Structure probing data (DMS and 2A3) for a 177-nucleotide construct.
The RNA was probed in 150 mM KOAc, 10 mM MgCl2 and 150 mM bicine (pH 8.5) at 24 C.
2A3 is a SHAPE reagent: it acylates the 2'-hydroxyl of flexible nucleotides of all four kinds.
For 2A3 the reverse transcriptase was SuperScript II with manganese.
The DMS profile rests on 3,966 reads.
The data come from the RNA Mapping Database (RMDB), library OK2TRN.
DMS adducts were read by reverse transcription with MarathonRT.
RNA sequence: GGGAACGACUCGAGUAGAGUCGAAAAUAGGUAUGAUCGUACCUCUAGCCAUGGGAUCCUAGCAGUCUAGUACGAUCGUACUCUGACCAUGUGUGAGUGCCAUGCAUGGCACGUACUGAUCAGUACCACAAUCCUGUCGUUUCGACGACAGGAUUGUAAAAGAAACAACAACAACAAC
Reactivity to DMS in 0.01 (KOAc 150mM, MgCl2 10mM, bicine 150mM(pH8.5), 24C), signal-to-noise 4, nucleotides 027 to 126: u000a110g010g010u000a020u000g010a020u000c020g000u000a000c020c080u000c020u000a120g040c080c090a110u020g010g010g010a210u000c060c000u000a110g000c110a040g010u000c160u010a130g010u000a010c000g010a000u010c010g020u000a010c000u010c030u000g000a070c000c010a030u020g000u000g010u010g000a130g000u000g010c020c000a070u020g030c250a110u010g010g000c000a010c050g020u010a010c020u000g000a020u000c020a010g020u010a160c020c080
Reactivity to 2A3 in 0.01 (KOAc 150mM, MgCl2 10mM, bicine 150mM(pH8.5), 24C), signal-to-noise 4, nucleotides 027 to 126: u120a030g010g030u010a000u020g010a020u020c010g000u000a020c000c010u020c020u010a020g020c060c060a280u230g110g030g070a090u140c030c020u010a040g000c080a020g060u040c160u260a010g010u000a000c010g000a010u000c000g010u000a000c010u000c020u080g030a060c010c000a060u130g030u000g010u010g160a300g020u050g050c030c000a060u170g100c060a170u110g050g000c000a000c020g030u020a010c000u010g030a090u030c020a010g030u020a030c030c000